Notes
The record gives the reactivity of an RNA of 207 nucleotides to DMS and 2A3. For 2A3, 4,923 sequencing reads were counted. Values cover nucleotides 27 to 156.
RNA sequence: GGGAACGACUCGAGUAGAGUCGAAAAGGGUGAUGUCUCCUAACCUUUAUCAAUGGGGGCACUCGGUCGUGCUGUGGGUAGAAAUUUUAUUUCGUGCCUAGCUUAGACGCUUGUCGUCGGGAGUAUGUGGGACUGAUGAACUUCGGUUCAUCAGUAAACCUAGAUACAAGUUCGCUUGUAUCUAGGUAAAAGAAACAACAACAACAAC
Reactivity to DMS in 0.01 (KOAc 150mM, MgCl2 10mM, bicine 150mM(pH8.5), 24C), signal-to-noise 3, nucleotides 027 to 156: g000g000g030u010g000a080u010g010u000c010u000c020c010u010a110a120c050c050u000u000u020a130u010c110a100a110u020g010g030g020g030g040c030a070c040u000c040g020g020u000c040g020u000g020c030u000g040u010g040g020g020u000a180g000a010a020a070u000u010u000u000a060u000u020u000c020g020u000g030c020c010u010a080g000c030u010u000a120g010a060c030g030c050u010u010g010u000c010g010u010c030g020g000g010a120g020u000a060u000g020u000g020g010g010a070c010u000g010a010u000g000a010a010c000u000u000c300g040g030u010u010c000a010u000c000a010g010u000a010a120
Reactivity to 2A3 in 0.01 (KOAc 150mM, MgCl2 10mM, bicine 150mM(pH8.5), 24C), signal-to-noise 7, nucleotides 027 to 156: g050g000g010u080g020a090u040g020u020c010u030c010c010u050a100a130c020c010u130u230u130a180u170c120a080a100u160g010g000g000g010g000c000a010c020u030c030g060g010u020c020g030u050g020c040u050g010u130g030g000g000u050a030g080a010a040a020u160u220u170u180a130u060u100u060c050g040u080g020c010c000u000a010g000c000u020u040a020g010a020c000g010c040u120u240g120u240c020g010u010c020g020g050g000a050g040u080a100u210g050u160g020g010g020a010c000u000g000a010u000g000a000a000c010u020u040c160g040g010u000u000c000a000u000c000a000g000u000a030a000

The RNA was probed in 150 mM KOAc, 10 mM MgCl2 and 150 mM bicine (pH 8.5) at 24 C. For 2A3 the reverse transcriptase was SuperScript II with manganese.